An RNA of 177 nucleotides, treated with DMS and 2A3 and read out base by base. DMS adducts were read by reverse transcription with MarathonRT. For 2A3, 2,387 sequencing reads were counted. Values cover nucleotides 27 to 126. For DMS, 1,855 sequencing reads were counted. The reactions ran in a buffer of 150 mM KOAc, 10 mM MgCl2 and 150 mM bicine (pH 8.5), at 24 C.

RNA sequence: GGGAACGACUCGAGUAGAGUCGAAAAGGCGGGGCGUUCGCGCCCCGCCAAAGUCGGAAUGCGUAAUAAUUAAUCGUACGCAUCGAUUAAUAUCCGACAUUAAAAGCCGAUCAUUCGUGAUCGGCAACGGUAUACAUAACUUCGGUUAUGUAUACCGAAAAGAAACAACAACAACAAC
Reactivity to DMS in 0.01 (KOAc 150mM, MgCl2 10mM, bicine 150mM(pH8.5), 24C), signal-to-noise 2, nucleotides 027 to 126: g010g100c030g050g050g120g120c030g180u010u020c240g040c060g210c080c030c000c050g120c000c010a000a000a020g000u000c010g010g010a030a020u010g020c050g020u000a040a010u010a150a120u020u000a050a070u000c120g010u000a060c100g020c080a060u000c030g010a040u000u000a020a080u000a110u000c000c010g000a010c000a140u000u010a090a050a090a070g010c000c000g000a000u000c010a050u000u000c140g000u000g000a010u010c000g000g000c020a000a010
Reactivity to 2A3 in 0.01 (KOAc 150mM, MgCl2 10mM, bicine 150mM(pH8.5), 24C), signal-to-noise 2, nucleotides 027 to 126: g000g010c040g100g030g010g050c050g060u070u030c050g070c050g060c020c010c010c030g080c000c000a000a000a000g000u000c000g000g040a040a010u060g030c020g030u030a000a020u090a140a080u280u210a030a090u120c080g050u030a020c060g050c040a030u020c020g060a060u060u220a090a030u050a020u110c000c010g000a010c000a000u050u180a090a120a030a000g000c000c000g010a000u000c000a010u030u160c190g080u040g020a000u000c000g000g000c000a000a000